[RMDB]
RNA sequence: GGGAACGACUCGAGUAGAGUCGAAAAUGCUAGCGCGCAUGCUUGGCGGCUAUGAACGAUGGUAUAACUGUAUGGGACAGAAACAUGUCACCAACCAGGAGAUGGUAGCGGUAGAAAACAGAGCCUUGGGAAUGCUAAAGAUGACUGAAAUCACCUACAAUCCGUACGAUUUCGAUCGUACGGAUUGAAAAGAAACAACAACAACAAC
Reactivity to 2A3 in 0.01 (KOAc 150mM, MgCl2 10mM, bicine 150mM(pH8.5), 24C), signal-to-noise 3, nucleotides 027 to 156: u130g000c030u040a040g040c090g040c030g000c070a030u140g040c020u010u080g050g000c020g010g010c020u040a040u190g020a060a050c070g070a050u040g000g060u070a100u080a120a080c030u020g020u100a070u160g070g010g000a010c020a040g110a050a260a020c100a130u050g010u010c010a030c210c000a030a030c030c010a020g030g020a080g020a060u050g010g000u030a010g010c030g000g000u040a020g060a060a090a000a000c040a000g050a000g020c010c030u010u010g010g000g020a080a030u090g020c020u060a160a000a000g060a040u030g020a030c010u000g030a020a040a070u050c020a070c040c000u050a050
Reactivity to DMS in 0.01 (KOAc 150mM, MgCl2 10mM, bicine 150mM(pH8.5), 24C), signal-to-noise 2, nucleotides 027 to 156: u000g040c030u000a110g000c020g020c020g070c010a050u000g010c050u040u020g010g040c230g010g030c020u030a030u000g030a060a110c050g020a020u000g010g010u000a090u010a030a150c030u010g030u000a080u000g000g010g040a200c030a090g000a160a100a100c080a080u000g010u000c000a070c000c010a080a030c050c010a090g020g040a130g000a160u000g030g010u000a110g030c010g020g000u010a090g000a010a080a080a100c050a120g000a100g000c050c040u000u010g060g010g010a060a140u000g000c030u000a040a080a140g000a060u010g010a110c080u010g000a050a100a270u000c040a030c040c030u010a200